[RMDB]
RNA sequence: GGGAACGACUCGAGUAGAGUCGAAAAAUCGGUACCGACCGCCCAAUUGGCCAGCACUUUCUCGAUCGGGUUCGACUCGGCGGCACGCUGGAUCUCGACCGGAUUGGGCUGGUCGACGGCCCCGGCGGCCCGUUGCGAAGUUCGCUUCGCAACGGGCAAAAGAAACAACAACAACAAC
Reactivity to 2A3 in 0.01 (KOAc 150mM, MgCl2 10mM, bicine 150mM(pH8.5), 24C), signal-to-noise 2, nucleotides 027 to 126: a000u040c020g040g110u120a130c050c010g090a060c010c000g000c000c000c010a000a040u030u090g000g010c010c000a000g050c020a080c050u100u140u030c150u180c060g180a250u030c040g010g020g050u070u140c220g050a140c130u030c000g030g010c000g020g090c080a030c180g000c000u000g070g000a120u010c020u130c080g100a020c000c060g000g000a000u000u010g000g010g040c140u110g020g010u000c000g000a000c000g000g040c010c000c000c000g090g010c000g100